An RNA of 177 nucleotides, treated with 2A3 and DMS and read out base by base. It was measured as part of the RMDB library TTRDES. High DMS reactivity at an A or C suggests that its Watson-Crick edge is free. The RNA was probed in 150 mM KOAc, 10 mM MgCl2 and 150 mM bicine (pH 8.5) at 24 C. DMS adducts were read by reverse transcription with MarathonRT. High 2A3 reactivity points to a flexible backbone, as in loops and unpaired stretches. For DMS, 932 sequencing reads were counted.

[RMDB]
RNA sequence: GGGAACGACUCGAGUAGAGUCGAAAAGAUAUGGAAUGUGAGUUCUUUUGACGGAGGAGGUAUCGGAAACGAUACACCUCCGAUAAGAACCCAUUCCUAAGUCAAAACGCAGCGUUCGCGCUGCGAACUUUCCGGAAAAGUUCGCUUUUCCGGAAAGAAAAGAAACAACAACAACAAC
Reactivity to 2A3 in 0.01 (KOAc 150mM, MgCl2 10mM, bicine 150mM(pH8.5), 24C), signal-to-noise 1, nucleotides 027 to 126: g020a000u060a100u140g000g040a000a000u040g220u200g120a300g100u080u000c020u060u300u120u250g290a220c110g030g000a000g000g000a260g100g000u000a000u000c010g000g000a070a090a050c010g000a000u010a000c000a000c010c000u000c000c000g000a000u020a000a000g010a000a000c000c000c010a000u030u000c010c000u000a080a030g070u000c010a000a080a080a110c020g000c000a010g000c010g040u100u130c260g040c000g030c230u020g020c000g000a010a010
Reactivity to DMS in 0.01 (KOAc 150mM, MgCl2 10mM, bicine 150mM(pH8.5), 24C), signal-to-noise 1, nucleotides 027 to 126: g020a040u000a300u010g020g010a030a020u000g000u000g020a200g020u000u000c000u000u000u000u000g020a300c200g020g020a010g000g040a300g000g020u000a000u000c010g000g010a090a140a220c000g000a000u000a020c000a090c020c000u000c000c000g000a020u000a010a020g000a000a010c000c020c000a020u010u000c000c000u000a050a140g020u000c000a030a110a110a130c010g020c000a040g020c000g040u000u030c280g030c060g000c080u000g000c000g000a020a100